[RMDB]
The data come from the RNA Mapping Database (RMDB), library OK2TRN.
Chemical mapping of a 177-nucleotide RNA with 2A3 and DMS.
The RNA was probed in 150 mM KOAc, 10 mM MgCl2 and 150 mM bicine (pH 8.5) at 24 C.
RNA sequence: GGGAACGACUCGAGUAGAGUCGAAAACACUUCACCGAUUUGGAUGUAGUAGAGUGAGUUCAGGUGGAUUCUCAGCAAGUUCACCCAGCUGCUUCACUUGGUGUAUUGCAACAACAGAUACAAUGUGUCCCAACGAUAAUUUCGAUUAUCGUUGGGAAAAAGAAACAACAACAACAAC
Reactivity to 2A3 in 0.01 (KOAc 150mM, MgCl2 10mM, bicine 150mM(pH8.5), 24C), signal-to-noise 2, nucleotides 027 to 126: c020a000c020u060u050c020a040c050c000g150a140u070u020u170g130g010a050u060g000u080a060g050u050a080g010a100g140u120g070a060g000u130u060c010a000g000g010u010g070g060a060u100u000c080u040c050a030g020c040a000a040g000u070u050c010a020c000c020c010a050g060c040u060g010c000u090u090c010a010c000u000u040g030g000u040g000u010a050u050u100g010c030a080a040c010a030a000c020a110g040a100u060a140c060a070a120u100g050u010g090
Reactivity to DMS in 0.01 (KOAc 150mM, MgCl2 10mM, bicine 150mM(pH8.5), 24C), signal-to-noise 4, nucleotides 027 to 126: c080a090c080u000u000c040a040c020c010g020a110u020u010u010g010g020a080u000g010u010a020g010u000a070g020a070g030u000g000a070g010u000u000c160a120g020g020u000g000g000a060u010u000c050u010c170a150g000c200a090a050g010u000u000c030a040c010c010c090a150g010c070u000g010c030u000u010c030a040c160u000u010g020g020u000g010u000a040u000u000g020c070a050a040c100a060a090c070a080g000a070u010a060c140a080a070u010g000u000g000